An RNA of 177 nucleotides, treated with 2A3 and DMS and read out base by base. DMS adducts were read by reverse transcription with MarathonRT. The RNA was probed in 150 mM KOAc, 10 mM MgCl2 and 150 mM bicine (pH 8.5) at 24 C. The DMS profile rests on 6,130 reads. Values cover nucleotides 27 to 126.
[RMDB]
RNA sequence: GGGAACGACUCGAGUAGAGUCGAAAACGUGUUCGGAUCCAGCCGGCCCGGAAGACCAGGAGCACCCAGCGCGUGGAUCGUGCCAGCCCAGAUACGAACGAGGCCAGAGAAUGGACGUCUGUAGGUCCGACUUAUCAGUGUUCGCACUGAUAAGUCGAAAAGAAACAACAACAACAAC
Reactivity to 2A3 in 0.01 (KOAc 150mM, MgCl2 10mM, bicine 150mM(pH8.5), 24C), signal-to-noise 5, nucleotides 027 to 126: c030g060u060g030u140u060c020g040g020a020u010c020c010a010g060c030c000g050g000c000c050c010g020g040a120a050g070a100c020c030a040g040g040a040g020c010a050c010c020c020a030g030c040g010c040g100u040g050g010a040u110c010g010u040g020c000c020a030g010c020c000c010a020g020a050u090a040c040g020a070a010c030g020a050g000g060c000c020a010g050a010g020a140a070u090g020g020a030c030g050u040c050u060g140u100a040g030g100u010c030
Reactivity to DMS in 0.01 (KOAc 150mM, MgCl2 10mM, bicine 150mM(pH8.5), 24C), signal-to-noise 3, nucleotides 027 to 126: c090g000u010g020u000u010c000g000g000a090u010c040c140a130g010c030c080g020g000c030c030c000g040g010a070a070g010a130c020c040a060g000g030a110g000c070a090c060c040c040a120g010c020g000c020g040u010g000g010a080u000c030g000u000g020c000c020a120g000c010c020c040a030g000a060u010a020c040g000a070a060c080g010a090g000g000c010c010a110g010a100g020a090a110u010g000g000a040c060g000u000c020u000g000u000a070g010g000u000c080
2A3 adducts were read by reverse transcription with SuperScript II with manganese.